Annotation: Structure probing data (DMS and 2A3) for a 177-nucleotide construct. For 2A3, 1,506 sequencing reads were counted. The DMS profile rests on 584 reads. For DMS the reverse transcriptase was MarathonRT. The reactions ran in a buffer of 150 mM KOAc, 10 mM MgCl2 and 150 mM bicine (pH 8.5), at 24 C.
[RMDB]
RNA sequence: GGGAACGACUCGAGUAGAGUCGAAAAUCCUCAGGGUUCGCCCUGAGGAAAACGCUCAACUCAUGGAGGGCACGACGGAUCACCAUCGAUUCGACAUGAGAAAAAGAACUUGCUUCGGCAAGUUCAAGUGAUGUGGAUUGUUCGCAAUCCACAUCACAAAAGAAACAACAACAACAAC
Reactivity to DMS in 0.01 (KOAc 150mM, MgCl2 10mM, bicine 150mM(pH8.5), 24C), signal-to-noise 1, nucleotides 027 to 126: u000c000c000u000c000a000g000g000g070u010u010c230g020c000c000c000u000g000a020g000g000a000a000a090a060c250g000c030u000c040a090a160c020u000c040a040u000g000g000a090g040g000g030c140a080c000g050a060c060g010g040a150u040c210a080c050c030a030u000c050g000a300u000u000c050g010a180c010a050u000g000a020g000a040a080a070a120a130g000a010a000c000u000u000g000c000u010u000c230g020g000c000a000a000g060u000u000c000a080a060
Reactivity to 2A3 in 0.01 (KOAc 150mM, MgCl2 10mM, bicine 150mM(pH8.5), 24C), signal-to-noise 1, nucleotides 027 to 126: u000c000c000u000c000a000g030g050g000u010u040c100g080c050c000c000u000g000a010g000g000a030a000a000a030c030g030c000u020c020a070a160c010u000c000a020u000g000g000a010g020g050g010c140a110c140g040a010c030g020g000a090u230c100a070c300c010a030u030c050g000a000u050u010c010g030a010c000a000u010g000a000g000a120a030a000a000a010g000a000a000c010u010u000g000c000u050u080c300g140g010c000a000a010g010u000u000c000a010a010